[RMDB]
Record summary: An RNA of 207 nucleotides, treated with 2A3 and read out base by base. 2A3 adducts were read by reverse transcription with SuperScript II with manganese. Conditions: 150 mM KOAc, 10 mM MgCl2 and 150 mM bicine (pH 8.5), 24 C. Values cover nucleotides 27 to 156.
RNA sequence: GGGAACGACUCGAGUAGAGUCGAAAAGUAGAAUCUGUCAAACAAAACCCCAAAACCUUACACUGAGAGCAUUUAGCCUGAUUACUCUUUAAAUCAAAUCAGGCAAUAGAGAGAAACUCGAGAGGUGAAACGGGAGUAAUGUUCGCAUUACUCCCAACAACCUCGUUUACUUCGGUAAACGAGGUUGAAAAGAAACAACAACAACAAC
Reactivity to 2A3 in 0.01 (KOAc 150mM, MgCl2 10mM, bicine 150mM(pH8.5), 24C), signal-to-noise 1, nucleotides 027 to 156: g060u070a030g070a090a120u040c020u100g110u170c100a010a250a130c160a040a130a140a240c050c070c030c080a120a170a020a020c000c070u100u130a040c050a050c060u140g040a000g000a010g020c000a050u000u120u000a010g070c040c000u000g000a000u020u060a030c020u060c080u140u210u250a040a150a020u140c020a040a000a000u000c020a000g010g020c000a000a000u000a060g030a000g000a000g060a000a050a050c000u000c030g050a080g010a020g000g100u070g000a080a040a060c110g000g000g000a000g000u020a000a000u030g000u050u080c130g000c110a000u000u000a000c000u010c030c000c000a010a000